Background:
The record gives the reactivity of an RNA of 177 nucleotides to DMS. Values cover nucleotides 27 to 126.
RNA sequence: GGGAACGACUCGAGUAGAGUCGAAAAGUGUAUGUGGCUCAGAAACGCAAGAUCUCCGACGGUGACAAGCUGGCCGGCCGGCACGGCAACAAGGGCGUGAUCGGCAAGAUCCUGCCGGUUGAGGACAUAAAAGUGCAUGGUUCGCCAUGCACUUUUAAAAAGAAACAACAACAACAAC
Reactivity to DMS in 0.01 (KOAc 150mM, MgCl2 10mM, bicine 150mM(pH8.5), 24C), signal-to-noise 3, nucleotides 027 to 126: g040u010g020u000a070u010g010u010g000g020c040u010c050a060g000a070a130a100c200g000c040a020a050g000a070u000c020u000c140c050g010a060c040g020g010u000g010a120c130a080a300g010c040u010g000g020c030c020g000g010c010c020g000g010c050a040c030g020g000c030a060a110c230a080a130g010g010g010c040g020u010g010a060u000c010g000g020c130a100a040g000a050u000c050c050u000g000c030c020g000g010u010u000g000a050g010g020a030c100a120
About this RNA
The data come from the RNA Mapping Database (RMDB), library OK2TRN. For DMS the reverse transcriptase was MarathonRT.